This 207-nucleotide RNA was probed chemically with DMS and 2A3. Conditions: 150 mM KOAc, 10 mM MgCl2 and 150 mM bicine (pH 8.5), 24 C. The data come from the RNA Mapping Database (RMDB), library OK3TST.

[RMDB]
RNA sequence: GGGAACGACUCGAGUAGAGUCGAAAAGGUAACUAUAAUAGCAGGUAACAAAGACUUCAAAAACCUUUUUAGAAGGUAGAAAGGAUACUGAAUUAUGGCAAGCGAUUCAUUUUGCCAGAAGAACUUAGCAAUUUUAAACUUGAAUUCGCAAAAUACAGAUAUUACGGAUAUUCGUAUCCGUAAUAUCAAAAGAAACAACAACAACAAC
Reactivity to DMS in 0.01 (KOAc 150mM, MgCl2 10mM, bicine 150mM(pH8.5), 24C), signal-to-noise 1, nucleotides 027 to 156: g000g010u000a110a110c030u000a080u000a070a100u000a140g000c070a070g010g080u010a090a210c080a070a090a250g050a230c000u010u000c020a050a080a090a120a070c000c010u000u000u000u020u020a160g030a070a040g010g050u000a110g010a060a060a070g000g000a060u010a110c060u000g000a050a110u000u000a030u000g010g040c010a050a160g060c050g050a100u010u000c050a100u000u000u020u000g020c060c010a020g000a060a040g000a150a110c100u020u000a030g030c000a010a030u020u030u000u000a070a080a110c150u000u020g000a050a060u010u020c000g030c020a020a060a100a150u000a070c040a130
Reactivity to 2A3 in 0.01 (KOAc 150mM, MgCl2 10mM, bicine 150mM(pH8.5), 24C), signal-to-noise 2, nucleotides 027 to 156: g030g050u030a070a040c020u000a040u040a130a090u070a020g050c030a010g000g050u020a040a010c020a070a060a070g030a050c010u040u040c110a060a020a060a050a070c020c000u030u000u020u030u120a230g040a080a000g030g010u010a030g080a050a050a020g010g000a040u050a140c020u020g040a070a050u070u030a010u010g040g000c040a050a030g000c040g040a010u040u050c010a000u010u090u120u040g010c020c050a010g040a090a000g020a080a010c130u160u160a020g000c010a010a050u050u050u090u220a250a130a060c010u000u020g030a020a010u180u110c000g020c010a000a050a030a060u190a070c030a010